[RMDB]
RNA sequence: GGGAACGACUCGAGUAGAGUCGAAAAGAAAUUACGUUUCCUUUACACUUCUCAAACCGGGAUCAAGAGAAGCAAAGCAUCCCUCAUAUCCACGAUGGAGGGUGUCGUGGAGUAUACUGUACCACAAAGAGCGAACACGGCUUCGGCCGUGUUCGAACUUCUAACCUCACUUCGGUGAGGUUAGAAGAAAAGAAACAACAACAACAAC
Reactivity to 2A3 in 0.01 (KOAc 150mM, MgCl2 10mM, bicine 150mM(pH8.5), 24C), signal-to-noise 2, nucleotides 027 to 156: g030a010a040a040u200u120a060c050g020u030u030u010c020c000u040u060u050a080c110a020c010u050u040c020u000c030a090a030a020c040c070g040g040g000a050u050c060a240a070g030a000g020a040a030g030c050a000a040a000g020c020a060u030c020c030c010u050c040a090u060a030u100c020c000a020c010g010a000u050g060g070a060g050g070g020u070g000u030c030g000u000g010g000a000g010u000a020u020a090c140u130g120u140a100c060c020a050c070a060a090a020g070a020g030c010g010a000a000c000a010c000g000g020c000u030u030c150g060g000c010c000g000u000g000u000u000c000g000a000a000

Source information
Chemical mapping of a 207-nucleotide RNA with 2A3. For 2A3, 1,199 sequencing reads were counted. Conditions: 150 mM KOAc, 10 mM MgCl2 and 150 mM bicine (pH 8.5), 24 C. The data come from the RNA Mapping Database (RMDB), library M2RFPK.